[RMDB]
RNA sequence: GGGAACGACUCGAGUAGAGUCGAAAAAGCCCCGAAAAAUUCAUAUUGCAUGAGGCUUUCACUUUCGUGAUAGUGGGAGCGGUCGUAUACGCACGCCAGGCGAGUGCGAAUACCUCGGCCGUGGUCGAAAAGGCCUUGACCUUCGGGUCAAGGCCAAGCUAUUGUUAUUGUUCGCAAUAACAAUAGCAAAAGAAACAACAACAACAAC
Reactivity to 2A3 in 0.01 (KOAc 150mM, MgCl2 10mM, bicine 150mM(pH8.5), 24C), signal-to-noise 1, nucleotides 027 to 156: a000g110c050c000c020c010g290a110a060a040a140a080u210u130c020a050u100a050u230u300g040c040a030u030g030a030g050g000c000u050u090u060c020a010c020u090u260u220c180g050u120g090a080u050a100g030u010g000g050g000a040g000c000g000g000u000c000g030u020a050u010a050c010g030c020a000c040g010c010c000a060g150g000c080g010a020g000u050g020c000g000a030a040u080a100c030c010u030c040g030g000c000c030g050u050g000g030u090c030g000a010a080a020a070g000g010c000c000u000u000g000a000c010c010u050u020c210g100g000g010u000c000a000a000g000g060c030c000a000a000